[RMDB]
The record gives the reactivity of an RNA of 177 nucleotides to 2A3 and DMS. For 2A3 the reverse transcriptase was SuperScript II with manganese. Conditions: 150 mM KOAc, 10 mM MgCl2 and 150 mM bicine (pH 8.5), 24 C.
RNA sequence: GGGAACGACUCGAGUAGAGUCGAAAAAAAGAUAUGGAGAUCUUGUCAGCUUUAGAUAACAAUGAUGGAUCUCGGAAACGAGAUCUUGAGUUAUCGAAGAGCUUGGAUUUAGAUCUCCUAAGUCAAAGGAAGAGUAUCAGUUCGCUGAUACUCUUCCAAAAGAAACAACAACAACAAC
Reactivity to 2A3 in 0.01 (KOAc 150mM, MgCl2 10mM, bicine 150mM(pH8.5), 24C), signal-to-noise 2, nucleotides 027 to 126: a010a050a010g080a080u070a080u140g000g000a020g010a010u000c000u010u030g020u040c000a040g020c000u300u300u040a020g000a010u020a010a000c010a260a300u210g000a030u060g040g030a000u020c000u000c020g000g000a080a090a000c000g030a000g010a010u020c020u000u020g000a030g000u000u000a010u010c010g030a040a020g010a000g000c070u020u040g110g010a030u300u190u000a000g000a010u000c000u000c010c010u010a000a000g030u030c090a060a000a070
Reactivity to DMS in 0.01 (KOAc 150mM, MgCl2 10mM, bicine 150mM(pH8.5), 24C), signal-to-noise 1, nucleotides 027 to 126: a030a060a110g010a040u010a300u000g000g020a010g000a000u000c000u000u000g010u000c000a010g000c000u000u000u000a300g010a000u010a000a010c000a090a120u000g000a090u000g000g000a010u000c000u010c000g000g000a110a110a170c010g010a010g000a000u000c000u000u000g020a070g000u000u000a000u000c010g000a200a150g000a010g030c000u010u000g010g000a010u000u010u010a010g000a000u000c020u040c010c000u000a010a100g060u000c050a060a110a220